RNA sequence: GGGAACGACUCGAGUAGAGUCGAAAAGAUAUGGAGCUGUCACAGGGAGCUCAGUUAUCGGAAACGAUAACGAGCAUCGAUCUGUGCAGCUCCUAAGUCAAAAGUGCACUUCUUCGGAAGUGCACAACAGUAAUAGAUUCUUCGGAAUCUAUUACUGAAAAGAAACAACAACAACAAC
Reactivity to 2A3 in 0.01 (KOAc 150mM, MgCl2 10mM, bicine 150mM(pH8.5), 24C), signal-to-noise 8, nucleotides 027 to 126: g010a000u020a010u070g000g000a000g000c000u050g290u300c060a010c010a010g080g050g100a170g020c040u030c230a100g010u000u000a000u000c000g000g010a010a000a020c010g000a000u000a000a000c010g000a000g000c000a060u300c150g230a300u040c010u000g000u000g000c000a000g010c000u000c000c000u000a000a000g000u000c000a020a030a080a090g000u000g000c000a000c010u010u000c010u060u080c300g170g010a010a000g000u000g000c000a000c000a010a000
Reactivity to DMS in 0.01 (KOAc 150mM, MgCl2 10mM, bicine 150mM(pH8.5), 24C), signal-to-noise 6, nucleotides 027 to 126: g000a020u010a180u010g000g000a010g020c010u000g000u030c020a010c010a010g010g000g020a160g020c000u000c010a100g010u000u010a000u000c000g000g010a050a030a090c000g010a010u010a000a010c000g000a010g010c000a180u000c280g000a100u000c000u000g010u000g000c000a010g000c000u000c000c000u000a000a050g000u000c020a090a080a120a140g020u000g010c000a010c000u000u000c000u000u010c250g030g000a000a010g000u000g010c000a000c010a010a070
Source: RMDB library TTRDES, as collected in RNAgym. This 177-nucleotide RNA was probed chemically with 2A3 and DMS. DMS adducts were read by reverse transcription with MarathonRT. For 2A3, 29,416 sequencing reads were counted. For DMS, 13,710 sequencing reads were counted.